[RMDB]
RNA sequence: GGGAACGACUCGAGUAGAGUCGAAAAACUCAUAUAAAUGUUAGAAGUCAAAAGUCUUAGCUAUUCUUAUUCUGACAAGUUAAUAUUUCGAAACACUUCUUUUGUAUCUCAUCCAGGAAAGAUUACCGAUAGUAAGUUAAUUCGUUAACUUACUAUCAAAAGAAACAACAACAACAAC
Reactivity to DMS in 0.01 (KOAc 150mM, MgCl2 10mM, bicine 150mM(pH8.5), 24C), signal-to-noise 6, nucleotides 027 to 126: a080c050u010c020a110u010a130u000a060a080a070u010g000u000u000a040g010a070a090g010u000c090a050a090a080a060g000u000c050u000u000a090g000c080u010a080u010u000c020u000u000a110u000u010c100u000g000a030c050a060a090g010u010u000a040a050u000a050u000u000u010c070g000a100a080a090c110a050c080u000u000c020u000u010u010u000g010u000a070u000c030u000c050a060u000c060c070a090g010g010a070a060a060g000a070u000u010a100c190c130
Reactivity to 2A3 in 0.01 (KOAc 150mM, MgCl2 10mM, bicine 150mM(pH8.5), 24C), signal-to-noise 5, nucleotides 027 to 126: a000c030u030c020a030u200a030u060a190a160a030u050g010u030u030a020g010a050a020g040u100c060a050a080a100a100g020u000c060u110u110a050g020c040u060a100u160u030c000u050u090a160u100u040c030u040g010a010c010a020a050g020u020u050a140a060u080a150u090u120u110c060g040a090a070a010c040a010c040u040u000c000u050u130u050u110g070u040a130u010c040u010c030a070u060c040c030a020g080g070a070a110a040g060a040u150u140a060c040c030